[RMDB]
The record gives the reactivity of an RNA of 207 nucleotides to 2A3 and DMS. Reactivities are given for positions 27 through 156. DMS adducts were read by reverse transcription with MarathonRT. The DMS profile rests on 5,658 reads.
RNA sequence: GGGAACGACUCGAGUAGAGUCGAAAACGACUUGGCAGCAUAGAAAGUAGAGGAGUUCUGGCCAGAGUAAAGGUAGCCUUCUCCGGGAACAGAUGCAGUAGGACUGGUAGGUGGCAACGGUUGCUGGAAACCAAGCUGGCAGCCAGCAUGGUGGGAAUAAAUGAUAAUGCUUCGGCAUUAUCAUUUAAAAAGAAACAACAACAACAAC
Reactivity to 2A3 in 0.01 (KOAc 150mM, MgCl2 10mM, bicine 150mM(pH8.5), 24C), signal-to-noise 3, nucleotides 027 to 156: c020g040a030c020u040u050g030g010c030a020g030c010a070u060a160g110a060a120a000g100u070a030g030a040g060g000a030g020u100u030c070u060g010g000c000c000a030g020a000g040u170a120a030a040g040g040u090a060g010c020c000u070u050c040u030c030c020g030g010g000a080a020c030a050g060a060u070g030c010a010g010u070a040g020g090a030c050u040g020g040u030a040g010g050u020g010g010c010a020a010c030g000g020u000u040g010c000u030g010g000a100a060a040c030c010a050a040g040c010u020g000g030c020a020g070c030c000a000g050c020a030u080g000g040u020g010g010g030a040a070
Reactivity to DMS in 0.01 (KOAc 150mM, MgCl2 10mM, bicine 150mM(pH8.5), 24C), signal-to-noise 2, nucleotides 027 to 156: c020g000a050c030u010u000g020g030c020a070g020c050a130u010a080g010a100a120a150g020u010a070g020a060g020g010a130g010u010u000c030u000g010g000c000c000a120g010a120g020u010a050a050a050g020g040u010a120g020c130c030u000u000c020u000c020c020g020g020g000a060a100c080a060g000a080u000g020c000a040g020u000a090g010g020a060c040u010g010g020u000a060g030g010u000g020g020c030a050a060c060g020g010u000u000g010c030u000g020g000a130a080a100c050c040a050a120g010c040u000g010g030c050a100g010c050c010a090g000c030a040u000g000g010u000g020g010g000a120a190